Overview:
The record gives the reactivity of an RNA of 177 nucleotides to 2A3 and DMS. The RNA was probed in 150 mM KOAc, 10 mM MgCl2 and 150 mM bicine (pH 8.5) at 24 C. For DMS the reverse transcriptase was MarathonRT.
RNA sequence: GGGAACGACUCGAGUAGAGUCGAAAAGAUAUGGAAACAUCGAGCUCGCAUCGCUAGGGACUAUAGACUCGGAAACGAGUCUACGAAUCCCUAGCGAUGCCGGAGCUAAGACAGUGUUUCCUAAGUCCUAAUCGUACAGGUUCGCCUGUACGAUUAGAAAAGAAACAACAACAACAAC
Reactivity to 2A3 in 0.01 (KOAc 150mM, MgCl2 10mM, bicine 150mM(pH8.5), 24C), signal-to-noise 1, nucleotides 027 to 126: g020a010u150a040u280g000g010a010a000a000c030a010u200c070g020a030g060c010u030c000g000c010a020u000c040g030c010u070a000g050g000g020a000c050u040a000u000a140g030a010c000u020c000g000g110a050a060a030c020g010a000g010u020c010u010a020c020g000a010a070u000c010c000c000u000a020g000c020g000a000u000g020c010c000g070g030a010g000c010u030a060a060g150a000c120a050g050u000g010u050u010u020c000c000u030a140a080g140u030c000
Reactivity to DMS in 0.01 (KOAc 150mM, MgCl2 10mM, bicine 150mM(pH8.5), 24C), signal-to-noise 4, nucleotides 027 to 126: g020a120u010a270u030g010g010a030a010a030c000a030u000c130g000a050g000c000u010c010g020c000a030u010c010g000c010u000a010g000g020g010a060c040u010a270u000a000g020a000c010u000c000g000g010a100a090a200c010g010a030g020u000c000u010a010c110g010a070a190u000c000c000c000u000a000g010c010g020a000u000g000c040c240g010g010a030g020c000u000a070a050g000a120c300a070g020u010g010u000u000u000c000c010u000a070a120g010u000c030